Conditions: 150 mM KOAc, 10 mM MgCl2 and 150 mM bicine (pH 8.5), 24 C. Structure probing data (2A3 and DMS) for a 207-nucleotide construct. For DMS the reverse transcriptase was MarathonRT.
RNA sequence: GGGAACGACUCGAGUAGAGUCGAAAACGCAUUAGCCGCUUAGUCGGCUAACGUUCUUUCUGAUUUUUCCUGUCGGAUCAGAGGGGGCGUAAUUUCAGGCAGGAUAGUCCUAACCUUUUCCUGUGGGGAACAGGGCGAAAUUCACAUGGGAUAGCAACGAUCUUAAUCAGUUCGCUGAUUAAGAUCGAAAAGAAACAACAACAACAAC
Reactivity to 2A3 in 0.01 (KOAc 150mM, MgCl2 10mM, bicine 150mM(pH8.5), 24C), signal-to-noise 9, nucleotides 027 to 156: c060g020c040a100u010u000a000g010c010c010g020c080u260u230a100g140u300c000g000g000c000u000a000a000c000g000u000u000c000u010u020u000c000u000g000a000u000u000u000u010u000c000c000u010g010u010c000g000g000a000u000c000a000g000a000g010g000g000g010g010c020g030u070a010a030u070u230u220c060a000g000g000c000a000g000g000a000u010a000g010u000c000c010u010a040a090c060c000u020u010u080u050c010c000u020g000u010g010g000g000g010a020a050c030a050g010g020g000c000g010a080a120a060u290u230c140a060c000a110u010g040g000g000a050u070a040g030c040a040a070
Reactivity to DMS in 0.01 (KOAc 150mM, MgCl2 10mM, bicine 150mM(pH8.5), 24C), signal-to-noise 2, nucleotides 027 to 156: c040g010c040a090u000u010a010g010c010c000g030c020u010u000a110g040u010c000g010g050c010u000a000a000c010g070u000u000c010u010u000u000c020u000g010a030u000u000u000u000u020c010c000u000g010u000c040g000g030a030u000c000a070g010a060g000g010g010g000g020c030g000u000a000a000u000u010u010c140a040g010g000c030a030g000g040a120u000a040g030u000c010c000u000a060a300c050c020u020u000u000u010c010c020u000g040u010g010g010g010g010a020a210c300a060g000g040g010c030g010a070a060a120u000u000c140a040c030a070u020g000g000g030a060u010a140g020c010a140a250

2A3 adducts were read by reverse transcription with SuperScript II with manganese.